Conditions: 150 mM KOAc, 10 mM MgCl2 and 150 mM bicine (pH 8.5), 24 C.
Structure probing data (2A3 and DMS) for a 207-nucleotide construct.
RNA sequence: GGGAACGACUCGAGUAGAGUCGAAAAGUGUCACCGUUUCGCCGGCCACCACCAGCAGCAACCGGCAGAUGCUGGCGAUCAUCAAUCAUGAACUUGAUACCAUGGACGACGUGCAGCUGCAGCACCUGAGCCGCAUGAUUGAAAAGAAAAAAGAGGAGAUUCUGAACGAAUUCGUUCGUUCAGAAUCAAAAGAAACAACAACAACAAC
Reactivity to 2A3 in 0.01 (KOAc 150mM, MgCl2 10mM, bicine 150mM(pH8.5), 24C), signal-to-noise 3, nucleotides 027 to 156: g070u070g010u060c060a040c110c010g000u030u120u060c060g000c030c010g000g010c030c040a020c010c010a030c020c040a030g030c030a020g000c020a050a150c080c050g030g000c060a050g020a060u090g000c010u050g010g000c020g030a040u040c010a040u010c020a050a000u000c000a010u020g090a140a050c030u080u130g030a060u170a170c110c060a110u140g060g030a030c060g020a030c080g050u020g010c020a050g000c020u070g000c030a010g010c000a020c000c060u100g030a020g000c020c030g000c020a010u020g000a020u010u020g010a020a050a040a080g080a030a160a010a050a010a000g120a060g070g040a100
Reactivity to DMS in 0.01 (KOAc 150mM, MgCl2 10mM, bicine 150mM(pH8.5), 24C), signal-to-noise 1, nucleotides 027 to 156: g040u000g020u020c030a300c000c030g000u000u000u010c010g070c040c050g080g010c030c000a130c100c060a040c080c060a050g010c030a100g000c100a090a090c060c000g020g070c000a070g020a080u000g000c060u000g000g030c020g000a060u000c070a100u000c000a000a040u030c060a020u000g020a120a090c050u000u000g010a220u000a040c050c000a130u010g000g010a110c110g000a070c150g000u000g030c040a100g020c060u010g000c010a270g000c030a030c000c030u030g000a170g000c030c020g030c020a030u000g000a060u000u000g010a060a030a030a180g000a060a070a040a030a120a130g020a180g040g000a260
About this RNA: Values cover nucleotides 27 to 156. It was measured as part of the RMDB library OK3TST. The 2A3 profile rests on 1,553 reads. DMS adducts were read by reverse transcription with MarathonRT. For DMS, 1,425 sequencing reads were counted.